RNA sequence: GGGAACGACUCGAGUAGAGUCGAAAAGGACUACGCAGUCCGGCAACAUCAGCAGAGAGCCCGCUAUACGUGACGGAUUGGCUGAAGCGUACAGAAAUAUUGAGCCUCCUGCAAGAGGCAGCCAAGCAAAACGUACGUGAGUUCGCUCACGUACGAAGUUUCCCUUACAGUUCGCUGUAAGGGAAACAAAAGAAACAACAACAACAAC
Reactivity to 2A3 in 0.01 (KOAc 150mM, MgCl2 10mM, bicine 150mM(pH8.5), 24C), signal-to-noise 4, nucleotides 027 to 156: g000g000a020c040u090a040c180g070c190a030g010u000c020c020g010g030c020a080a090c010a160u130c020a020g000c020a010g080a020g010a020g160c020c020c020g000c030u080a050u010a130c080g010u060g050a020c010g060g050a080u010u030g060g000c010u030g000a040a010g020c000g020u020a010c020a040g110a110a170a030u260a110u180u170g020a020g020c000c010u010c000c010u040g080c040a080a010g020a010g030g000c010a000g020c000c030a020a020g050c060a070a060a040a000c010g000u000a000c000g000u000g000a010g020u080u140c180g030c090u000c000a000c000g000u010a000c000g000a000a000
Reactivity to DMS in 0.01 (KOAc 150mM, MgCl2 10mM, bicine 150mM(pH8.5), 24C), signal-to-noise 2, nucleotides 027 to 156: g040g020a050c000u000a150c100g050c080a100g030u000c020c030g000g040c020a010a040c090a050u000c010a130g040c050a080g010a090g010a170g010c020c000c010g070c010u000a100u010a030c000g060u030g030a300c040g020g000a210u000u000g020g030c020u000g000a030a300g010c010g000u000a040c050a040g010a100a060a120u000a130u000u000g000a170g000c010c030u000c030c030u020g000c120a120a120g020a030g030g020c060a040g030c000c030a040a100g020c050a050a050a160a160c020g000u000a000c010g020u000g010a010g000u000u010c300g000c010u000c000a000c030g040u000a000c010g010a010a040